[RMDB]
RNA sequence: GGGAACGACUCGAGUAGAGUCGAAAAGGAGAGUAGAUGAUUCUCGUUAAGUGUGUGUGACUGGGAUGUCCUCACACAACGAAGCGAGAGCGCGGUGAAUCAUAGCAUCAGCUCCAAAGAAAGAAAACAGCUAGUCCCUCUUCGGAGGGACUAGCUGAAAAGAAACAACAACAACAAC
Reactivity to 2A3 in 0.01 (KOAc 150mM, MgCl2 10mM, bicine 150mM(pH8.5), 24C), signal-to-noise 1, nucleotides 027 to 126: g000g000a010g040a000g050u300a030g000a040u000g000a080u010u000c010u000c000g000u000u140a050a000g000u000g000u000g020u000g070u180g130a070c000u020g000g260g000a150u140g040u000c000c000u050c000a000c000a000c000a000a000c000g280a000a000g000c050g000a010g000a000g200c000g000c010g000g040u060g040a000a020u000c000a030u120a030g120c000a000u140c000a010g110c030u160c120c000a080a000a000g030a000a110a150g090a000a070a000a050